[RMDB]
RNA sequence: GGGAACGACUCGAGUAGAGUCGAAAAAUCAGUGGGCUAAGCCCAGACUUAUGAGAGAGUGGUUACCUCUCACGCCCCCUCCACCGUUGGGGGUGCCCUAUUCGGAGCACUGCAGUUUCGAUAGAAACCUUAUCGCUAACUUCGGUUAGCGAUAAGGAAAAGAAACAACAACAACAAC
Reactivity to DMS in 0.01 (KOAc 150mM, MgCl2 10mM, bicine 150mM(pH8.5), 24C), signal-to-noise 1, nucleotides 027 to 126: a100u020c070a040g010u000g020g000g010c020u010a160a190g020c010c000c010a010g000a040c130u010u030a030u020g010a030g010a010g000a010g020u020g010g010u010u010a140c150c010u010c000u010c010a040c040g010c000c000c000c000c000u000c050c150a100c270c170g020u000u010g000g010g030g030g000u000g010c000c020c020u000a110u000u000c040g010g000a030g040c020a070c100u020g050c150a100g000u000u000u000c010g000a040u030a100g000a080a080a100
Reactivity to 2A3 in 0.01 (KOAc 150mM, MgCl2 10mM, bicine 150mM(pH8.5), 24C), signal-to-noise 1, nucleotides 027 to 126: a000u030c020a020g180u040g000g000g000c110u180a140a090g050c000c050c000a010g000a010c000u110u110a110u200g000a000g010a000g000a020g000u040g060g020u110u050a040c000c000u000c000u020c010a000c000g020c030c020c010c020c000u100c030c010a230c050c050g060u070u040g000g000g010g010g000u000g010c000c000c000u120a170u080u080c030g000g000a010g010c000a020c150u130g020c060a100g030u060u000u000c040g000a040u040a170g110a020a050a010